Structure probing data (DMS) for a 177-nucleotide construct. Conditions: 150 mM KOAc, 10 mM MgCl2 and 150 mM bicine (pH 8.5), 24 C.
[RMDB]
RNA sequence: GGGAACGACUCGAGUAGAGUCGAAAAGCUUACCCCGUUGUGGAUGAGGCAUGCUUGGUGGAUGAUUUUGUUAAUUUAAAAUAUAAAGCUGCAACUCCUGGUAAGGAUAAUGCAUCUUCUGCUGUUAAAAUAGUCUGGAGUUCGCUCCAGACUAUUUAAAAGAAACAACAACAACAAC
Reactivity to DMS in 0.01 (KOAc 150mM, MgCl2 10mM, bicine 150mM(pH8.5), 24C), signal-to-noise 1, nucleotides 027 to 126: g030c100u000u000a070c070c000c020c060g010u010u000g020u020g000g020a070u010g000a100g020g010c040a050u000g030c060u000u010g020g030u000g010g020a090u010g000a070u000u000u000u020g000u010u000a070a110u000u010u010a020a040a060a090u000a170u000a120a020a140g000c030u000g020c030a030a180c200u000c010c020u000g000g010u000a040a020g010g000a050u000a030a090u010g000c030a060u000c020u000u000c050u000g010c030u000g010u000u000a110